[RMDB]
Structure probing data (2A3) for a 207-nucleotide construct. The data come from the RNA Mapping Database (RMDB), library PDB130. For 2A3 the reverse transcriptase was SuperScript II with manganese. The RNA was probed in 150 mM KOAc, 10 mM MgCl2 and 150 mM bicine (pH 8.5) at 24 C. Values cover nucleotides 27 to 156.

RNA sequence: GGGAACGACUCGAGUAGAGUCGAAAAGAGCUCUUAGUGGGCCAUUUUUGGUAAGCAGAACUGGCGAUGUGGGUUGAACCAAAUAUUGGGAUAAGACGUCUAACAUUCACUAAUAGAUACCACAAAAGGUGUUAGUUCAUUAAGACAGCAGGACGGUCAUCGGUAAGUUCUUCGGAACUUACCGAUGAAAAGAAACAACAACAACAAC
Reactivity to 2A3 in 0.01 (KOAc 150mM, MgCl2 10mM, bicine 150mM(pH8.5), 24C), signal-to-noise 1, nucleotides 027 to 156: g070a020g010c010u030c010u160u120a040g040u090g000g020g010c040c010a120u000u050u050u040u110g110g000u060a110a000g100c000a010g000a130a090c050u010g000g000c050g060a040u060g050u050g100g030g030u050u020g070a070a050c000c030a160a000a000u200a060u110u050g050g050g000a040u080a040a020g040a010c040g000u000c000u010a030a040c080a040u040u070c040a060c010u010a000a000u020a040g060a040u170a060c040c000a000c220a090a110a020a000g020g010u020g030u070u000a040g010u030u000c060a030u020u080a020a010g040a010c050a000g040c000a000g020g050a020c060g000g000u000